[RMDB]
RNA sequence: GGGAACGACUCGAGUAGAGUCGAAAAUCUGGCACCAGUUCAACGUCGCCAAGGAUCCGGACCUACUCGCCAAGAUCGCGACGUACUUCGACGGUGUCGACGCGACUGAGCCGACAGACCUGAUCCGACCCCGGCUAUUAUUCGUAAUAGCCGGGGUAAAAGAAACAACAACAACAAC
Reactivity to DMS in 0.01 (KOAc 150mM, MgCl2 10mM, bicine 150mM(pH8.5), 24C), signal-to-noise 2, nucleotides 027 to 126: u040c040u010g000g000c010a100c000c020a080g030u020u030c170a100a050c060g000u050c000g000c070c230a150a080g020g030a010u040c050c100g000g000a070c100c120u010a030c230u000c100g030c020c070a100a130g020a100u020c080g000c010g020a050c020g030u000a040c130u010u000c140g070a060c150g000g000u000g000u000c010g000a110c090g020c050g020a010c020u030g000a150g020c020c000g030a020c110a030g000a140c030c000u000g000a080u000c030c000g000
Reactivity to 2A3 in 0.01 (KOAc 150mM, MgCl2 10mM, bicine 150mM(pH8.5), 24C), signal-to-noise 5, nucleotides 027 to 126: u040c020u020g030g010c040a050c030c010a070g050u120u110c060a100a060c050g010u020c060g020c020c010a010a070g110g000a000u020c060c060g010g070a110c030c000u080a090c030u040c030g020c010c000a090a030g070a250u070c030g000c000g010a030c000g010u050a030c040u090u140c080g120a130c160g010g030u020g030u030c010g010a010c010g000c010g000a030c020u050g040a020g050c040c020g020a010c030a020g030a050c000c010u010g000a060u010c000c020g010